The record gives the reactivity of an RNA of 177 nucleotides to 2A3.

[RMDB]
RNA sequence: GGGAACGACUCGAGUAGAGUCGAAAAGGAAAACGAGUCACCAAGCGUGAACUGAGAAGGCUGAAAAAGCUGAGCAAGCAGGCACUUUUUUAUAGUAGUGGCUCACCCUUCGCACAUACGGCUGGAGGAUCCCGCUCACUUUCGAGUGAGCGGGAUCAAAAGAAACAACAACAACAAC
Reactivity to 2A3 in 0.01 (KOAc 150mM, MgCl2 10mM, bicine 150mM(pH8.5), 24C), signal-to-noise 1, nucleotides 027 to 126: g050g040a000a020a000a220c050g000a000g000u000c000a000c000c090a040a050g190c020g050u070g000a040a120c000u000g000a040g020a270a030g000g000c040u050g070a100a050a000a000a000g000c000u020g000a030g030c060a010a010g040c000a000g160g000c000a000c000u050u110u000u000u130u050a280u120a150g150u050a000g000u000g010g000c000u010c010a040c000c000c000u080u050c050g000c000a040c010a140u140a020c070g090g020c000u060g060g020a100g040